[RMDB]
RNA sequence: GGGAACGACUCGAGUAGAGUCGAAAACAACACAUCCUCGUCGUACAGAGUGGUAACAUGUGUCACCACAUAUCCAAGCUUGGGUACACGGGCUUGACCCAACCCCUUGGGCGGAUGGUGGCACAUGAAAAGAAGUAACACUUCGGUGUUACUUCAAUCUCUCAAAUAUGUUCGCAUAUUUGAGAGAAAAAGAAACAACAACAACAAC
Reactivity to DMS in 0.01 (KOAc 150mM, MgCl2 10mM, bicine 150mM(pH8.5), 24C), signal-to-noise 2, nucleotides 027 to 156: c040a100a100c050a090c050a100u010c000c010u000c050g020u020c090g000u000a120c090a120g000a110g030u000g010g000u000a060a180c020a020u000g030u000g010u000c000a020c000c000a040c060a180u000a060u000c010c000a000a140g000c080u000u000g010g000g060u000a030c130a080c030g010g020g020c040u000u000g000a150c000c000c020a100a070c020c010c000c000u000u000g010g010g030c070g030g000a130u000g010g020u000g000g000c000a020c020a000u000g010a020a070a100a100g000a020a000g030u000a020a010c000a050c010u000u000c300g080g000u000g000u000u000a000c000u010u000c010a020a070
Reactivity to 2A3 in 0.01 (KOAc 150mM, MgCl2 10mM, bicine 150mM(pH8.5), 24C), signal-to-noise 6, nucleotides 027 to 156: c050a040a030c030a010c010a140u100c010c010u030c040g140u040c040g060u180a110c080a090g050a030g040u120g040g050u140a100a010c000a010u000g000u000g000u000c000a000c010c010a060c080a130u270a020u030c000c000a000a020g030c020u030u020g000g000g000u020a020c030a020c050g000g000g010c020u270u300g140a300c000c010c000a000a040c000c010c000c000u000u010g010g010g000c000g000g020a030u030g000g000u010g000g000c000a000c000a000u000g000a000a010a000a010g010a000a000g000u000a000a000c000a000c000u040u080c220g050g000u010g000u000u000a000c000u000u000c000a000a010